RNA sequence: GGGAACGACUCGAGUAGAGUCGAAAAAUAGUGCGUCGCGGGAGUGAGCUUGAAAUUAGUAAACGAAAAGAUUCCUGUAUCAUAAAAGUCUUUCACUAUUUCAUGAAGUAUUUCAAUCUCCAACUAAUCGUCACGUGAGAUUCGUCUCACGUGACGAAAAAGAAACAACAACAACAAC
Reactivity to 2A3 in 0.01 (KOAc 150mM, MgCl2 10mM, bicine 150mM(pH8.5), 24C), signal-to-noise 1, nucleotides 027 to 126: a010u090a020g110u020g000c000g030u040c010g000c040g000g000g010a010g040u240g010a000g020c070u030u060g070a080a080a000u240u000a020g000u100a000a040a040c110g070a000a080a000a000g090a000u000u040c080c150u300g120u260a170u210c070a010u200a090a000a020a000g020u000c000u000u000u000c000a000c030u000a000u000u030u010c000a030u090g150a020a020g160u060a000u000u070u060c030a040a000u080c000u000c030c000a000a000c000u000a130a000
About this RNA: An RNA of 177 nucleotides, treated with 2A3 and read out base by base. Source: RMDB library OK1LIB, as collected in RNAgym.